The data come from the RNA Mapping Database (RMDB), library M2RFPK.
Chemical mapping of a 207-nucleotide RNA with 2A3 and DMS.
The RNA was probed in 150 mM KOAc, 10 mM MgCl2 and 150 mM bicine (pH 8.5) at 24 C.
RNA sequence: GGGAACGACUCGAGUAGAGUCGAAAAACCCCAGAAACCAUUCCUUAUACCUUGAGUAUUGCUGAAUUCAGUUUAGCGUGCAUGCUCUUGGCUAUUCUCAUAGUGAUUGUCAAAUUUGGGGUUACUUAAAACACGACACCCUUCGGGGUGUCGUGAACAAUUAUUUGAUGUUCGCAUCAAAUAAUUGAAAAGAAACAACAACAACAAC
Reactivity to 2A3 in 0.01 (KOAc 150mM, MgCl2 10mM, bicine 150mM(pH8.5), 24C), signal-to-noise 5, nucleotides 027 to 156: a000c010c000c000c000a010g070a050a050a010c040c000a030u030u060c020c010u060u060a020u030a080c000c000u000u020g010a000g000u010a070u210u140g000c020u040g050a160a110u200u200c090a130g160u060u110u140a060g020c060g050u040g050c020a000u010g000c000u000c000u000u010g010g000c000u040a030u110u100c120u030c120a090u120a070g120u130g110a030u030u040g040u080c070a030a090a120u040u020u020g010g010g000g000u010u010a010c010u030u080a010a050a020a020c020a000c000g000a000c000a000c020c010c000u030u070c180g030g000g020g000u000g000u000c010g000u000g000a000a000
Reactivity to DMS in 0.01 (KOAc 150mM, MgCl2 10mM, bicine 150mM(pH8.5), 24C), signal-to-noise 2, nucleotides 027 to 156: a050c020c000c000c000a060g010a120a050a100c020c010a070u000u000c020c020u000u000a230u000a030c000c000u000u030g000a040g020u000a030u000u000g020c030u000g010a060a080u000u000c200a260g020u000u000u000a070g020c050g030u000g010c100a180u000g000c000u000c010u000u000g010g030c050u000a050u010u010c020u000c050a130u000a050g010u000g020a020u000u000g000u020c040a060a040a120u000u000u000g010g020g040g020u010u000a060c080u000u000a050a090a150a220c010a010c010g000a010c000a010c000c010c000u000u020c290g070g030g010g050u010g000u000c010g010u000g000a000a080
2A3 adducts were read by reverse transcription with SuperScript II with manganese.